[RMDB]
RNA sequence: GGGAACGACUCGAGUAGAGUCGAAAAUCCAUAGAAAAUCCCAAUUAUUAGAAUGAUGUACUGGUGUGGAAUCGGGUUUACACAAUGGUUAUGACUGGAGUUCUGUGGAACCCAAUUACGGUAGUCAGCGUACAAAUUAGUUCGCUAAUUUGUACGCAAAAGAAACAACAACAACAAC
Reactivity to 2A3 in 0.01 (KOAc 150mM, MgCl2 10mM, bicine 150mM(pH8.5), 24C), signal-to-noise 2, nucleotides 027 to 126: u040c000c000a000u050a010g130a020a080a010a060u020c040c000c020a050a050u120u110a040u070u050a090g090a200a140u060g050a030u060g060u160a020c030u030g070g000u060g050u040g100g130a030a040u050c000g000g030g000u000u040u110a040c040a030c010a030a020u050g030g070u180u160a090u230g180a050c030u020g030g120a090g030u090u060c020u040g000u010g060g000a020a020c010c000c060a030a010u110u050a060c040g030g000u090a020g050u100c080a010
Reactivity to DMS in 0.01 (KOAc 150mM, MgCl2 10mM, bicine 150mM(pH8.5), 24C), signal-to-noise 3, nucleotides 027 to 126: u010c020c020a020u000a070g000a080a060a110a100u010c020c020c020a060a090u000u010a120u000u000a110g000a120a130u000g010a050u000g010u000a050c030u000g010g010u020g020u010g000g010a120a060u000c090g010g010g030u010u010u000a090c020a030c050a060a070u000g000g000u010u000a070u000g010a050c050u000g020g000a160g010u010u000c030u000g030u000g000g010a020a140c020c010c000a090a050u010u000a080c120g000g000u010a070g000u000c120a100